[RMDB]
RNA sequence: GGGAACGACUCGAGUAGAGUCGAAAAAAAUUGAAGAACAAGAUUAUAUGCAAGAAAGUGGUAAUUCCAUGAAAUUGCGGGGGAUUACGAUUGGGAUUGGAAUAAAUUCCGAAUACAACUACCAAACCUUUACUAAGCUGUUCGCAGCUUAGUAAAGAAAAGAAACAACAACAACAAC
Reactivity to 2A3 in 0.01 (KOAc 150mM, MgCl2 10mM, bicine 150mM(pH8.5), 24C), signal-to-noise 1, nucleotides 027 to 126: a010a010a030u070u060g010a080a080g020a040a010c020a000a000g000a030u150u130a050u150a010u300g000c000a000a010g070a170a050a010g050u010g020g030u090a150a150u300u040c000c000a000u010g020a020a090a040u010u000g000c000g000g020g000g000g020a040u000u140a060c050g040a020u000u090g010g020g000a010u010u030g010g060a030a040u110a100a120a040u050u000c000c000g000a010a030u100a040c050a040a010c070u070a020c010c010a070a040a030c000
Reactivity to DMS in 0.01 (KOAc 150mM, MgCl2 10mM, bicine 150mM(pH8.5), 24C), signal-to-noise 2, nucleotides 027 to 126: a050a080a050u020u000g020a050a110g010a070a110c030a070a080g000a130u000u000a080u000a090u030g020c030a070a020g010a060a140a200g020u010g000g010u010a110a090u020u010c010c020a040u000g000a090a090a140u000u000g020c030g040g000g020g020g000a180u010u010a020c130g010a090u010u010g000g010g000a020u000u010g000g020a170a030u000a050a050a040u000u000c010c000g000a090a070u010a090c110a040a070c120u010a120c100c110a090a060a130c130
Description:
The data come from the RNA Mapping Database (RMDB), library OK2TST. Chemical mapping of a 177-nucleotide RNA with 2A3 and DMS.